[RMDB]
RNA sequence: GGGAACGACUCGAGUAGAGUCGAAAACUAUGUACAGACAGUACAGUGGAUAAGGUCUAUGGAUAUCCAACUUCAACAAUGGUACUUGCAGUGGUAUCUAUCAAGAUAGGCAGGCUAUCAUAGAAAGAAGAUGUGUAUGAUUCGUCGUACGCAUCUUAAAAGAAACAACAACAACAAC
Reactivity to DMS in 0.01 (KOAc 150mM, MgCl2 10mM, bicine 150mM(pH8.5), 24C), signal-to-noise 9, nucleotides 027 to 126: c020u000a060u010g010u000a020c020a140g010a130c240a130g010u000a010c010a040g010u020g000g010a100u020a060a080g010g010u000c020u010a040u000g000g000a050u000a020u000c020c010a070a140c050u010u010c030a040a100c300a070a050u010g000g010u010a030c040u000u010g000c120a090g010u030g000g010u000a010u000c010u010a060u020c150a050a070g000a030u020a020g000g010c080a090g000g000c100u000a010u000c010a020u000a040g010a050a090a080g010
Reactivity to 2A3 in 0.01 (KOAc 150mM, MgCl2 10mM, bicine 150mM(pH8.5), 24C), signal-to-noise 9, nucleotides 027 to 126: c010u020a030u060g010u000a020c020a090g180a030c020a020g040u010a010c000a010g040u050g080g030a090u050a140a050g070g020u010c020u030a020u060g030g030a010u010a020u030c020c010a040a040c010u040u030c010a030a030c030a060a120u120g080g010u050a040c010u010u030g030c030a020g020u030g060g020u010a000u000c010u010a070u050c050a050a020g010a040u020a010g020g020c040a010g030g000c010u010a010u010c010a020u020a020g070a020a080a010g090